[RMDB]
RNA sequence: GGGAACGACUCGAGUAGAGUCGAAAAUCAAGUUCCCGGGCGGCGGCCAGAUCGUUGGUGGAGUUUACUUGUUGCCGCGCAGGGGCCCUAGAUUGGGUGUGCGCGCGACGAGGAAGACUUCCGAGCGCUCUUAAGAAGUGUUCGCACUUCUUAAGAGAAAAGAAACAACAACAACAAC
Reactivity to DMS in 0.01 (KOAc 150mM, MgCl2 10mM, bicine 150mM(pH8.5), 24C), signal-to-noise 4, nucleotides 027 to 126: u010c110a100a190g000u000u000c000c010c000g030g010g020c040g010g010c080g000g010c020c040a080g010a070u000c060g020u000u010g020g010u000g010g010a030g010u000u000u000a270c010u000u000g010u000u000g000c240c030g030c000g010c010a050g010g020g010g000c000c010c000u010a110g010a150u020u010g000g020g010u000g010u000g000c010g010c010g010c020g000a010c010g000a010g000g010a140a130g000a020c010u000u000c010c030g000a100g020c070g000
Reactivity to 2A3 in 0.01 (KOAc 150mM, MgCl2 10mM, bicine 150mM(pH8.5), 24C), signal-to-noise 2, nucleotides 027 to 126: u100c000a030a110g020u000u000c000c040c000g000g050g000c050g030g000c000g080g010c000c000a000g040a150u080c040g010u080u070g090g030u120g050g040a020g000u130u260u000a020c000u000u020g010u020u010g110c200c040g000c020g020c020a000g150g120g190g020c000c010c010u170a200g070a300u260u250g000g000g000u130g040u010g010c000g010c000g020c000g000a000c000g000a010g000g020a030a030g010a000c000u050u000c010c010g010a040g040c080g010